[RMDB]
RNA sequence: GGGAACGACUCGAGUAGAGUCGAAAAGAGGAGGACAGUGGCGCAGUGCUGGAUGCCGACGAGCUGGGCUCCCCCGACUGCACCCUCAUCGGCGCAACCUGGCACAUUCCCGCAAGGUGCGUGCUGCAUGCUUCUACUAGUUCGCUAGUAGAAGCAUAAAAGAAACAACAACAACAAC
Reactivity to DMS in 0.01 (KOAc 150mM, MgCl2 10mM, bicine 150mM(pH8.5), 24C), signal-to-noise 7, nucleotides 027 to 126: g010a080g010g010a070g000g010a110c040a030g020u000g020g020c040g020c050a060g010u000g010c010u000g000g010a080u010g010c010c010g020a060c060g000a050g020c150u000g000g000g010c050u000c040c030c010c030c040g010a240c130u010g000c050a110c020c060c020u000c040a050u000c020g000g000c020g010c080a090a060c050c000u010g000g000c020a030c050a160u000u000c070c010c010g020c170a100a110g010g010u000g020c040g020u000g000c010u000g000c130
Reactivity to 2A3 in 0.01 (KOAc 150mM, MgCl2 10mM, bicine 150mM(pH8.5), 24C), signal-to-noise 3, nucleotides 027 to 126: g050a010g050g030a010g040g040a010c010a040g040u060g120g040c020g000c030a010g020u020g050c020u030g030g020a030u060g020c030c000g020a020c020g010a010g020c120u140g000g030g030c020u110c000c010c000c010c010g090a100c070u090g030c030a190c030c000c000u010c010a040u030c000g010g000c010g000c010a010a050c010c000u020g000g000c000a000c000a040u070u050c020c000c000g000c040a040a020g030g020u030g020c000g000u020g020c020u030g000c020